The data come from the RNA Mapping Database (RMDB), library 15KLIB. The record gives the reactivity of an RNA of 170 nucleotides to DMS and 2A3. Values cover nucleotides 27 to 129.
RNA sequence: GGGAACGACUCGAGUAGAGUCGAAAAACACAGAUUCUAUUCACUUAAGGCUGCAGUCCAUGGGUGGAAGAUGGUUGUGUGUGAUAAGGUACGUUCUCUCAAAUUGAGUGAUAAUAAUUGUUAUCUUCGCGGAGAUUGUUCGCAAUCUCCAAAAGAAACAACAACAACAAC
Reactivity to DMS in 0.01 (KOAc 150mM, MgCl2 10mM, bicine 150mM(pH8.5), 24C), signal-to-noise 9, nucleotides 027 to 129: a010c030a030c040a010g030a070u050u010c010u000a160u040u010c010a040c000u000u000a130a100g000g000c050u040g030c220a110g010u060c020c020a070u010g000g000g000u040g010g010a000a000g020a000u010g010g040u070u020g020u030g030u000g040u030g030a100u020a090a100g010g050u050a070c070g000u010u000c020u000c010u040c090a090a090a120u030u010g020a080g030u040g030a080u040a020a040u000a100a150u010u000g020u030u010a090u000c010u010u000c100g020c300
Reactivity to 2A3 in 0.01 (KOAc 150mM, MgCl2 10mM, bicine 150mM(pH8.5), 24C), signal-to-noise 6, nucleotides 027 to 129: a000c040a010c020a020g020a030u010u060c020u080a300u040u000c020a000c020u040u030a130a020g030g000c020u190g080c240a020g030u040c010c010a050u130g020g010g020u000g020g030a030a020g010a030u060g110g090u120u020g020u000g010u000g030u010g020a130u060a110a000g040g020u080a070c030g010u030u000c030u000c010u010c080a060a060a240u180u190g020a100g120u080g070a080u010a160a040u130a080a030u110u040g030u040u030a190u160c000u000u040c110g000c050
The reactions ran in a buffer of 150 mM KOAc, 10 mM MgCl2 and 150 mM bicine (pH 8.5), at 24 C. Values are in units of 0.01, from 0 to 300, in steps of 10.